Structure probing data (DMS and 2A3) for a 177-nucleotide construct.
Source: RMDB library OK2TST, as collected in RNAgym.
The DMS profile rests on 2,666 reads.
Conditions: 150 mM KOAc, 10 mM MgCl2 and 150 mM bicine (pH 8.5), 24 C.
Reactivities are rounded to 0.1 and cut off at 0 and 3.
RNA sequence: GGGAACGACUCGAGUAGAGUCGAAAAUGCGCAUUGACCGGAAUGCCGAGGCGGAACAGGCGGUUUUCCAUUUCCGUCGCCAGCAUGGACGACAUGCCGCCGGAACCGAGGCAAAGCACGGGACCGACCUACUAGCGAGUUUCGACUCGCUAGUAGGAAAAGAAACAACAACAACAAC
Reactivity to DMS in 0.01 (KOAc 150mM, MgCl2 10mM, bicine 150mM(pH8.5), 24C), signal-to-noise 4, nucleotides 027 to 126: u020g000c050g020c040a050u000u010g000a300c010c000g020g000a060a110u000g000c010c020g000a300g010g000c040g000g000a090a100c080a090g000g010c030g000g020u000u000u010u010c120c120a160u020u010u010c090c060g010u000c000g020c030c030a140g000c180a060u010g010g000a080c140g020a080c000a090u000g000c010c020g000c030c000g000g020a080a090c010c000g010a280g010g030c030a010a030a080g020c060a080c040g000g000g000a130c080c030g010a160
Reactivity to 2A3 in 0.01 (KOAc 150mM, MgCl2 10mM, bicine 150mM(pH8.5), 24C), signal-to-noise 2, nucleotides 027 to 126: u130g010c020g030c050a030u010u090g070a080c000c010g010g010a030a010u020g000c020c000g000a030g000g000c030g010g030a110a010c020a050g040g000c000g010g000u100u050u090u050c070c030a060u120u070u040c060c090g000u040c010g030c020c010a060g090c060a150u140g010g000a110c010g000a010c000a020u060g000c030c000g020c000c000g030g000a020a020c000c010g000a020g010g030c000a040a030a020g010c050a020c020g000g000g020a030c020c010g040a060